Chemical mapping of a 177-nucleotide RNA with DMS and 2A3. The DMS profile rests on 2,518 reads. For DMS the reverse transcriptase was MarathonRT. Source: RMDB library RFMREP, as collected in RNAgym.
RNA sequence: GGGAACGACUCGAGUAGAGUCGAAAAAGAAUUGGAACUUCUGAACCACCACUGACGAAUCACAUUGAAACUAAAGAGAUGUAAUACGUCAUUUGGUGUUUCCGAAGUUUAUACUGUCAAGUUUAGCGCUAAUUACUCUGUUCGCAGAGUAAUUAGCAAAAGAAACAACAACAACAAC
Reactivity to DMS in 0.01 (KOAc 150mM, MgCl2 10mM, bicine 150mM(pH8.5), 24C), signal-to-noise 3, nucleotides 027 to 126: a060g000a110a120u010u000g010g010a010a010c000u000u000c000u000g000a020a010c040c000a020c010c000a030c300u000g000a020c010g000a120a020u010c040a000c000a010u000u000g020a190a100a070c230u000a050a100a020g010a300g000a000u000g010u010a030a010u000a070c010g000u000c000a010u000u000u000g020g020u000g010u000u000u000c020c060g000a000a010g000u000u000u010a040u010a100c050u000g010u010c070a070a110g000u010u000u000a070g030c300
Reactivity to 2A3 in 0.01 (KOAc 150mM, MgCl2 10mM, bicine 150mM(pH8.5), 24C), signal-to-noise 2, nucleotides 027 to 126: a000g040a010a050u160u080g020g030a000a000c000u000u000c000u000g000a010a020c010c000a000c000c000a000c000u000g000a000c000g020a020a030u020c010a020c020a020u010u060g060a120a110a050c090u120a100a160a110g150a030g000a010u010g010u020a000a010u030a040c020g000u010c010a020u030u030u130g000g000u000g000u000u000u000c000c000g000a000a010g010u000u000u010a020u000a010c060u060g130u180c080a120a080g000u030u140u170a060g000c020